[RMDB]
RNA sequence: GGGAACGACUCGAGUAGAGUCGAAAAGGACACCAGCAAGGCUGGAGACAGACAGCCUUCUUCCCCGCUGUGCACUGGCUGAGGCCUGGAGCUAGUGCCUUUCUUGUCUCUAAGAUAGAGUGAUGCUGGAAGAAGGAUAGUAGCUCAUGCGGGCCAAAAUAGUGCCUUUUUUCGAAAAGGCACUAUUAAAAGAAACAACAACAACAAC
Reactivity to 2A3 in 0.01 (KOAc 150mM, MgCl2 10mM, bicine 150mM(pH8.5), 24C), signal-to-noise 2, nucleotides 027 to 156: g040g010a010c010a000c060c010a020g020c090a200a070g200g030c020u010g000g030a080g110a050c050a010g050a010c010a020g030c000c000u010u000c000u000u000c000c010c020c030g010c060u130g080u160g040c020a000c000u010g010g000c010u020g010a040g070g000c000c010u040g050g010a000g010c000u000a000g010u010g030c000c000u000u060u020c020u020u120g080u040c010u030c020u190a150a120g010a220u160a050g100a040g020u090g050a080u120g050c060u040g010g000a000a010g010a010a000g000g000a000u050a080g110u070a010g050c020u020c060a070u190g050c010g000g000g010c000c000a070a030
Reactivity to DMS in 0.01 (KOAc 150mM, MgCl2 10mM, bicine 150mM(pH8.5), 24C), signal-to-noise 2, nucleotides 027 to 156: g000g000a160c040a110c000c030a060g010c020a090a060g040g030c030u000g030g020a140g010a290c130a130g000a160c100a110g010c000c010u000u000c020u000u000c010c000c020c070g010c020u010g030u000g040c020a020c020u010g010g000c000u000g010a070g030g000c040c000u020g020g000a050g010c010u020a050g030u000g000c000c020u000u000u000c030u010u010g020u020c030u010c100u000a100a160g000a110u020a080g000a070g000u000g000a080u000g030c040u010g020g000a050a060g000a050a060g010g020a060u000a050g010u000a100g000c040u000c050a090u000g010c000g020g020g020c000c020a040a080

This 207-nucleotide RNA was probed chemically with 2A3 and DMS. The 2A3 profile rests on 1,650 reads. The RNA was probed in 150 mM KOAc, 10 mM MgCl2 and 150 mM bicine (pH 8.5) at 24 C.